[RMDB]
RNA sequence: GGGAACGACUCGAGUAGAGUCGAAAAAGCCAGGGUCAAGUAAGUGGUACAAAAUGAUCCCAAGACGUUCCUAUUUGUUGAGAGAUCUAGCAAAGUGAAUGUCAUUUUCUCAGGAGCAUCAUUUGGCAGGCCCAGGCUUCAGGCCUGUCUGCCAUUACAUUAGUCGGCGAUUCGUCGCCGACUAAUGAAAAGAAACAACAACAACAAC
Reactivity to 2A3 in 0.01 (KOAc 150mM, MgCl2 10mM, bicine 150mM(pH8.5), 24C), signal-to-noise 1, nucleotides 027 to 156: a000g020c000c040a020g020g000g010u050c050a120a110g060u110a030a080g000u040g130g030u110a100c070a050a240a000a000u090g010a040u060c000c000c000a060a040g030a040c040g050u020u020c020c030u050a200u070u100u060g050u020u070g030a060g020a020g010a160u100c040u150a020g000c050a100a140a020g030u110g120a010a040u060g000u040c040a060u030u020u020u060c090u030c050a040g040g070a070g010c060a070u040c030a050u140u000u050g030g000c020a010g020g000c030c070c000a000g000g000c040u180u150c050a030g070g050c030c000u030g000u000c000u000g050c060c000a030u030u070a020